The record gives the reactivity of an RNA of 177 nucleotides to 2A3 and DMS. It was measured as part of the RMDB library TTRDEL. For 2A3 the reverse transcriptase was SuperScript II with manganese.
[RMDB]
RNA sequence: GGGAACGACUCGAGUAGAGUCGAAAAGAUAUGGAUGUCCUGGGACAUGCCUGUCGGAAACGACAGAGCAACAGCCCAUGACAUCCUAAGUCAAACACCGUAGUUCGGUUCGCCGAACUACGGUGAACUAUUACAUCAUCUUCGGAUGAUGUAAUAGAAAAGAAACAACAACAACAAC
Reactivity to 2A3 in 0.01 (KOAc 150mM, MgCl2 10mM, bicine 150mM(pH8.5), 24C), signal-to-noise 3, nucleotides 027 to 126: g000a010u020a010u060g000g000a000u010g000u000c020c030u010g010g000g080a180c080a110u020g000c010c000u010g000u000c000g010g000a010a010a000c000g010a000c000a010g030a020g060c000a020a030c050a110g090c000c000c000a010u000g000a000c010a000u010c000c000u000a000a000g010u010c010a020a130a050c020a000c000c000g000u000a000g000u000u010c020g040g050u030u070c300g050c080c000g000a000a000c000u000a000c000g010g000u000g000a000a000
Reactivity to DMS in 0.01 (KOAc 150mM, MgCl2 10mM, bicine 150mM(pH8.5), 24C), signal-to-noise 5, nucleotides 027 to 126: g000a010u000a150u010g000g000a010u000g000u000c000c060u000g000g010g010a220c110a130u000g000c010c000u000g010u010c010g010g000a060a030a080c000g010a010c000a010g000a140g020c010a020a100c300a110g010c000c000c000a010u000g000a010c000a010u000c000c000u000a000a050g000u010c010a130a140a240c010a010c000c000g000u010a000g000u000u000c000g000g000u000u020c200g020c000c000g000a000a020c000u000a000c000g010g010u000g000a010a090